RNA sequence: GGGAACGACUCGAGUAGAGUCGAAAACAACAAACAAAAAUACUUCCUUCAUCGAUAAAAGUCCGUUAAAGGAUAAACAAAGUCGAGAAAAUCGUAUAAAUGUAAAGGAUAUACGAAACAAAACAAACAUGUACGCCGAGUUCGCUCGGCGUACAUGAAAAGAAACAACAACAACAAC
Reactivity to 2A3 in 0.01 (KOAc 150mM, MgCl2 10mM, bicine 150mM(pH8.5), 24C), signal-to-noise 1, nucleotides 027 to 126: c000a010a000c190a030a200a090c230a000a070a050a030a000u100a200c030u120u060c000c000u000u010c000a300u000c150g000a000u060a280a040a000a000g010u000c010c000g000u000u050a180a100a130g000g000a000u000a030a000a000c000a010a010a010g040u000c000g000a000g010a160a160a000a000u030c000g030u000a030u000a000a300a000u080g040u130a040a020a020g270g070a000u000a000u000a070c000g100a070a000a140c060a000a150a000a000c000a020a050a020